[RMDB]
RNA sequence: GGGAACGACUCGAGUAGAGUCGAAAAUGUCGCGAUGCAAGUGACAACGGGUAACCCGGAUGUGCUGGCGAAUGGCAGCGAUCGACAUACGGUGAAUGUCCGGGUGGAAGAUCAGUUUGGCAAUGUGCCUCUACUCGACAUUCGUGUCGAGUAGAGGAAAAGAAACAACAACAACAAC
Reactivity to 2A3 in 0.01 (KOAc 150mM, MgCl2 10mM, bicine 150mM(pH8.5), 24C), signal-to-noise 2, nucleotides 027 to 126: u090g010u010c010g000c030g040a050u270g070c050a080a080g040u000g030a010c010a000a030c020g060g000g050u070a020a050c000c000c000g010g000a050u040g040u060g040c040u020g040g170c080g100a300a220u250g050g000c000a020g010c010g050a060u030c040g010a010c050a130u220a060c020g000g060u080g070a150a050u110g030u000c000c020g000g000g000u030g020g010a060a030g030a040u090c090a020g060u030u100u100g050g000c080a100a080u130g070u080g120
Reactivity to DMS in 0.01 (KOAc 150mM, MgCl2 10mM, bicine 150mM(pH8.5), 24C), signal-to-noise 3, nucleotides 027 to 126: u000g020u000c020g010c020g000a070u020g030c180a090a170g020u000g000a050c050a100a120c120g000g010g000u010a140a080c040c010c000g000g000a060u000g010u010g020c050u000g000g010c050g000a090a040u040g000g000c000a080g010c050g010a050u000c050g020a120c190a080u000a100c050g030g000u000g010a130a070u000g000u000c010c010g020g010g020u000g010g000a190a070g010a060u000c100a080g000u000u000u000g000g000c060a070a090u010g010u020g000
The record gives the reactivity of an RNA of 177 nucleotides to 2A3 and DMS. High DMS reactivity at an A or C suggests that its Watson-Crick edge is free. Conditions: 150 mM KOAc, 10 mM MgCl2 and 150 mM bicine (pH 8.5), 24 C.